[RMDB]
RNA sequence: GGGAACGACUCGAGUAGAGUCGAAAAGAAAGAAAGAAGCGAGCUGACGCAGCCGCACGGGCAACCGUCAAUCCAGCACUUCACAAGUCUUGUCGUUCUGACAGGACAUCCAUCAACCCACCGGGAAAAAAGGACUACAGCUUCGGCUGUAGUCCAACACAUAGUUAGUCUUCGGACUAACUAUGUGAAAAGAAACAACAACAACAAC
Reactivity to DMS in 0.01 (KOAc 150mM, MgCl2 10mM, bicine 150mM(pH8.5), 24C), signal-to-noise 1, nucleotides 027 to 156: g020a190a140a140g000a210a110a140g000a040a060g040c020g070a090g000c000u040g000a030c000g040c030a300g000c010c000g000c130a090c120g030g010g000c050a140a050c210c010g030u000c040a030a050u010c090c170a120g000c000a100c050u000u010c040a100c080a110a120g050u000c000u010u020g000u000c010g000u000u000c090u000g000a010c030a030g000g000a020c020a030u030c110c020a070u000c070a030a140c030c060c080a170c000c000g010g010g030a000a060a030a140a110a140g000g000a020c010u000a020c000a030g040c020u000u000c300g000g020c020u020g030u000a030g000u000c000c000a010a050
Reactivity to 2A3 in 0.01 (KOAc 150mM, MgCl2 10mM, bicine 150mM(pH8.5), 24C), signal-to-noise 4, nucleotides 027 to 156: g020a010a040a000g050a020a090a010g030a030a010g010c060g050a010g020c050u020g030a040c030g000c080a030g020c030c030g090c090a050c070g070g010g000c030a070a060c030c020g010u020c010a000a030u050c040c020a020g020c020a040c060u040u030c030a030c050a270a070g000u010c010u010u000g000u000c020g110u300u180c140u300g000a000c000a000g000g000a010c010a010u000c010c000a050u080c030a060a150c040c000c050a060c100c090g000g030g080a050a080a000a020a030a090g030g000a020c000u000a000c000a000g020c000u030u130c240g130g000c000u010g000u000a000g010u000c000c000a000a000
An RNA of 207 nucleotides, treated with DMS and 2A3 and read out base by base.
Reactivities are rounded to 0.1 and cut off at 0 and 3.
For 2A3 the reverse transcriptase was SuperScript II with manganese.
The RNA was probed in 150 mM KOAc, 10 mM MgCl2 and 150 mM bicine (pH 8.5) at 24 C.
For DMS, 1,586 sequencing reads were counted.
The data come from the RNA Mapping Database (RMDB), library M2RFPK.